[RMDB]
RNA sequence: GGGAACGACUCGAGUAGAGUCGAAAAAGCCGCUCUACGGACCGGCAAAACGUUCAUCUCGUUUUACGGGCCGCAUUAAGAUUGAAGCCAAGGAACGGGGACUUCAGACUACGACUACGGUCGUAGAUUACGCCUCCGAGUUUCGACUCGGAGGCAACCCUUUUAUUGUGUUCGCACAAUAAAAGGGAAAAGAAACAACAACAACAAC
Reactivity to 2A3 in 0.01 (KOAc 150mM, MgCl2 10mM, bicine 150mM(pH8.5), 24C), signal-to-noise 3, nucleotides 027 to 156: a000g070c000c000g060c030u010c050u110a020c030g010g000a010c020c020g000g060c100a010a030a010a000c090g020u160u130c100a200u090c130u030c030g000u000u000u000u000a020c000g000g000g000c010c000g010c010a070u150u210a070a050g040a110u020u030g020a030a000g000c010c020a040a080g130g020a100a060c060g040g010g050g060a100c010u040u020c040a040g030a030c000u000a000c000g000a000c010u030a010c220g100g000u000c000g000u000a000g000a000u040u090a050c080g000c010c000u000c000c010g000a000g020u080u120u120c150g110a020c000u000c000g000g000a000g000g000c000a000a000
Reactivity to DMS in 0.01 (KOAc 150mM, MgCl2 10mM, bicine 150mM(pH8.5), 24C), signal-to-noise 1, nucleotides 027 to 156: a090g070c030c010g040c080u000c010u000a050c060g000g000a000c000c010g050g060c220a000a010a010a040c000g050u000u010c260a220u000c180u000c030g000u000u000u000u000a030c000g020g000g000c010c000g000c000a110u000u020a070a090g010a190u000u000g010a060a040g000c010c030a070a070g000g040a080a150c050g010g000g050g010a040c000u010u010c030a160g000a240c010u010a000c000g000a020c000u000a120c300g040g000u000c000g080u000a030g000a080u000u020a060c100g010c000c020u000c000c000g010a040g030u010u000u010c280g000a060c040u010c000g020g020a010g040g000c000a010a000
Source information: Structure probing data (2A3 and DMS) for a 207-nucleotide construct. For 2A3 the reverse transcriptase was SuperScript II with manganese. The reactions ran in a buffer of 150 mM KOAc, 10 mM MgCl2 and 150 mM bicine (pH 8.5), at 24 C. For DMS the reverse transcriptase was MarathonRT.